[RMDB]
Structure probing data (DMS and 2A3) for a 207-nucleotide construct. Conditions: 150 mM KOAc, 10 mM MgCl2 and 150 mM bicine (pH 8.5), 24 C. It was measured as part of the RMDB library RNAMAK. The DMS profile rests on 2,068 reads. In probing experiments dimethyl sulfate is read out at A N1 and C N3, which are open when not base-paired. Reactivities are given for positions 27 through 156.
RNA sequence: GGGAACGACUCGAGUAGAGUCGAAAAGGUUUGUUCGCAAACCGCACAGCGUACUACCAGACCACCGACGAUCUUAGCUCCCCACCGAAAUCCCAAAUAGGAUUUCGAGGCUAAGGGAGGUGCGUCUGGUAUCGCCGACGACGGGAUUCGUCCCGAAGCCACUUACUGAAUUCGUUCAGUAAGUGGCAAAAGAAACAACAACAACAAC
Reactivity to DMS in 0.01 (KOAc 150mM, MgCl2 10mM, bicine 150mM(pH8.5), 24C), signal-to-noise 1, nucleotides 027 to 156: g060g010u010u000u000g020u000u030c070g050c030a050a050a130c030c010g010c030a190c070a140g000c010g070u000a020c160u010a020c000c000a030g000a050c000c000a000c010c000g010a130c120g000a030u010c030u040u000a030g010c010u010c110c150c030c050a300c190c020g000a010a000a010u000c000c000c050a050a110a200u020a050g010g000a050u000u010u000c010g020a280g000g020c010u000a000a030g000g010g000a040g100g050u010g040c180g040u000c010u000g000g020u000a000u000c000g010c020c000g000a160c020g000a230c000g010g010g000a300u020u000c150g000u000c010c010c000g010a090a240
Reactivity to 2A3 in 0.01 (KOAc 150mM, MgCl2 10mM, bicine 150mM(pH8.5), 24C), signal-to-noise 2, nucleotides 027 to 156: g010g010u020u020u020g050u050u120c170g020c200a040a000a000c000c010g050c050a130c020a010g000c020g070u120a090c040u010a000c050c000a000g010a000c010c000a010c000c020g140a260c020g000a130u010c010u000u000a010g000c000u120c060c100c050c000a060c010c010g000a000a000a000u030c000c020c040a140a300a080u200a070g000g000a000u010u010u020c010g000a010g010g000c000u000a000a000g010g010g000a020g000g010u010g000c010g010u000c000u020g010g000u000a000u000c000g010c030c050g040a020c070g020a030c000g000g000g050a120u070u090c040g010u030c030c000c010g010a060a010